Conditions: 150 mM KOAc, 10 mM MgCl2 and 150 mM bicine (pH 8.5), 24 C. Chemical mapping of a 177-nucleotide RNA with 2A3 and DMS.
RNA sequence: GGGAACGACUCGAGUAGAGUCGAAAAUUCCCCUAUUUCGAUAGGGGAACACCUGCGGGCGGCUCGCAGUUCCGACUUCCUCGUCCUCUGAGUCAAAGGGCGAUAGGCCUCGGUUCGCCGAGGCCAAAUAGUGUAUACCAUUCGUGGUAUACACUAUAAAAGAAACAACAACAACAAC
Reactivity to 2A3 in 0.01 (KOAc 150mM, MgCl2 10mM, bicine 150mM(pH8.5), 24C), signal-to-noise 4, nucleotides 027 to 126: u020u000c000c000c000c000u010a020u030u120u070c170g100a010u010a000g000g000g000g010a000a010c030a060c000c000u030g040c080g020g030g040c070g050g030c050u030c030g020c020a010g000u030u010c020c020g060a070c060u090u060c020c040u010c010g000u000c010c000u010c050u120g110a090g100u050c070a100a070a020g000g010g010c010g020a020u100a070g010g000c000c000u000c000g010g050u060u050c180g020c040c010g000a000g010g000c000c000a000a010
Reactivity to DMS in 0.01 (KOAc 150mM, MgCl2 10mM, bicine 150mM(pH8.5), 24C), signal-to-noise 7, nucleotides 027 to 126: u000u000c000c000c000c000u000a010u000u000u010c140g010a020u000a000g010g010g010g010a010a020c110a080c120c010u010g010c050g010g000g030c110g010g010c040u000c020g010c060a050g010u000u000c020c010g010a120c120u000u000c060c090u000c010g010u000c010c000u000c050u010g010a160g010u010c090a070a100a020g000g010g010c010g000a080u000a050g010g010c010c000u000c000g000g000u000u010c210g020c000c000g010a010g000g010c010c000a000a010
Background: It was measured as part of the RMDB library M2PK50. Reactivities are rounded to 0.1 and cut off at 0 and 3.